[RMDB]
RNA sequence: GGGAACGACUCGAGUAGAGUCGAAAACGGGGGAGCACCACAACCGGAGGAGCCUGCGGUUUAAUUGGACUCAACGCCGGAAAUCUCACCGGUCCCGACAGUAGUAAUGACGGUCAGGUUGACGACUAUAGGCGAUAGAAUUCGUUCUAUCGCCUAUAAAAGAAACAACAACAACAAC
Reactivity to 2A3 in 0.01 (KOAc 150mM, MgCl2 10mM, bicine 150mM(pH8.5), 24C), signal-to-noise 3, nucleotides 027 to 126: c000g010g010g000g040g000a020g030c030a050c010c020a040c030a040a050c000c010g030g050a030g000g030a040g110c050c020u070g040c040g020g060u000u050u070a120a180u060u110g020g020a030c030u030c150a030a020c060g060c000c000g000g040a040a060a050u020c000u000c050a100c020c020g000g000u000c010c000c030g050a020c040a040g090u230a010g040u080a070a060u150g100a040c070g030g000u040c030a000g130g040u030u060g070a080c030g000a000c000u000
Reactivity to DMS in 0.01 (KOAc 150mM, MgCl2 10mM, bicine 150mM(pH8.5), 24C), signal-to-noise 3, nucleotides 027 to 126: c020g020g030g010g000g010a020g030c100a120c090c060a070c250a130a080c010c020g020g040a140g020g000a120g010c060c020u000g000c090g000g000u030u000u010a130a100u020u010g010g020a300c050u000c050a070a040c160g010c000c040g000g000a040a070a130u030c040u030c110a050c050c010g000g000u000c000c010c020g000a090c180a060g000u000a050g010u020a060a060u040g000a080c050g010g000u010c040a070g010g000u010u010g010a090c060g000a100c140u000
The record gives the reactivity of an RNA of 177 nucleotides to 2A3 and DMS. It was measured as part of the RMDB libraries RFM100 and RFMREP. DMS adducts were read by reverse transcription with MarathonRT. For 2A3 the reverse transcriptase was SuperScript II with manganese. The 2A3 profile rests on 1,152 reads. 2A3 is a SHAPE reagent: it acylates the 2'-hydroxyl of flexible nucleotides of all four kinds.